[RMDB]
RNA sequence: GGGAACGACUCGAGUAGAGUCGAAAAAUACACUACGUGGCUUACCUGUAUGGGGGCAAGGGCUCGAAGAGGGAUCCCCGUGGAAAGCUACUCGAGCGAGGCGGAGAUCGAGCGCCAGUUCGAGCCCGCUAAAGAUCGACUUCGGUCGAUCUUUAGCAAAAGAAACAACAACAACAAC
Reactivity to DMS in 0.01 (KOAc 150mM, MgCl2 10mM, bicine 150mM(pH8.5), 24C), signal-to-noise 2, nucleotides 027 to 126: a060u000a040c090a070c090u000a090c110g030u000g010g000c020u000u000a090c060c030u020g000u020a060u000g000g000g000g000g000c300a080a130g030g010g050c010u000c000g000a020a070g010a140g000g000g000a070u000c000c010c020c020g040u000g000g000a050a070a160g010c010u000a060c060u000c090g010a060g020c020g020a140g000g020c000g000g000a100g000a080u000c040g010a120g030c240g030c030c030a070g010u000u010c010g000a030g020c030c050c020
Reactivity to 2A3 in 0.01 (KOAc 150mM, MgCl2 10mM, bicine 150mM(pH8.5), 24C), signal-to-noise 1, nucleotides 027 to 126: a000u150a000c050a010c050u160a050c050g100u040g080g000c000u030u070a130c040c000u060g100u130a160u270g060g010g010g000g000c050a130a070g070g010g030c000u020c000g050a030a010g010a110g190g040g000a020u060c000c000c000c000g020u050g050g110a130a060a000g050c010u000a030c040u040c080g040a040g090c030g030a060g040g090c000g010g010a090g030a070u090c060g050a060g060c000g000c010c030a030g010u000u000c010g000a010g000c000c000c000

This 177-nucleotide RNA was probed chemically with DMS and 2A3.
Conditions: 150 mM KOAc, 10 mM MgCl2 and 150 mM bicine (pH 8.5), 24 C.
The data come from the RNA Mapping Database (RMDB), library VIROID.
DMS adducts were read by reverse transcription with MarathonRT.